[RMDB]
RNA sequence: GGGAACGACUCGAGUAGAGUCGAAAAAUGAGCUCUCCCACAUGAUGCUGAUCCAUGGGCCAUGCUGUAGGCAGUGAGCACAAGGGCUUGGGCUGAGUCAGUAACAAGCAGGUGGAUUGUGCCUGACGUGACGACAAUACUUCGGUAUUGUCGUCACAAAAGAAACAACAACAACAAC
Reactivity to 2A3 in 0.01 (KOAc 150mM, MgCl2 10mM, bicine 150mM(pH8.5), 24C), signal-to-noise 1, nucleotides 027 to 126: a000u140g020a040g030c000u040c030u000c020c010c000a020c040a090u140g000a020u090g000c010u050g000a060u060c000c030a100u080g070g000g030c030c030a030u080g000c000u000g040u110a020g010g000c020a050g060u020g130a020g000c020a050c060a140a080g120g050g020c000u090u070g000g020g000c020u060g010a060g060u000c010a010g020u050a070a030c050a050a000g030c020a000g000g020u070g050g030a100u020u110g000u030g050c000c060u010g000a070c080
Reactivity to DMS in 0.01 (KOAc 150mM, MgCl2 10mM, bicine 150mM(pH8.5), 24C), signal-to-noise 2, nucleotides 027 to 126: a150u010g000a080g030c030u020c050u000c010c000c000a120c140a150u030g000a070u000g030c040u010g010a060u030c070c020a150u000g030g000g020c000c020a090u000g000c070u010g050u020a100g010g010c050a040g020u000g000a110g030c030a050c130a050a090g010g000g000c010u010u020g010g010g010c050u020g000a110g000u000c010a010g000u020a070a070c050a010a090g000c030a040g010g020u000g000g000a110u000u010g010u020g000c160c020u000g030a080c120